This 177-nucleotide RNA was probed chemically with DMS and 2A3.
RNA sequence: GGGAACGACUCGAGUAGAGUCGAAAAGAUAUGGAAUCAUCGCAAGGUCGACCACUCGGAAACGAGUGCAAGACUGAUGACCGAGUGAUUCCUAAGUCAAAUCACAUUGACUUCGGUCAAUGUGAAAGACCGUAAAAUUGUUCGCAAUUUUACGGUCAAAAGAAACAACAACAACAAC
Reactivity to DMS in 0.01 (KOAc 150mM, MgCl2 10mM, bicine 150mM(pH8.5), 24C), signal-to-noise 4, nucleotides 027 to 126: g010a020u010a280u000g000g010a010a000u000c000a030u000c020g020c030a050a180g020g000u000c000g010a300c300c010a010c000u000c000g010g000a070a100a160c000g000a020g000u010g010c020a030a300g000a020c000u010g010a080u010g020a080c300c030g000a000g010u000g000a000u000u000c000c010u010a010a090g000u010c020a030a130a170u000c010a000c000a000u000u000g000a030c010u000u020c200g030g000u000c010a000a000u000g000u000g010a000a090a070
Reactivity to 2A3 in 0.01 (KOAc 150mM, MgCl2 10mM, bicine 150mM(pH8.5), 24C), signal-to-noise 1, nucleotides 027 to 126: g030a000u030a020u080g000g010a000a000u000c000a000u000c010g000c070a230a300g010g000u010c010g000a090c070c000a000c010u000c010g000g010a030a030a020c010g000a000g000u010g040c010a070a110g020a020c000u000g050a120u080g000a020c040c010g000a090g200u100g000a010u000u020c000c000u010a060a020g040u000c030a050a040a180u060c000a000c000a000u000u000g000a010c000u040u020c140g010g000u000c010a010a000u010g000u000g010a000a010a000
For 2A3 the reverse transcriptase was SuperScript II with manganese.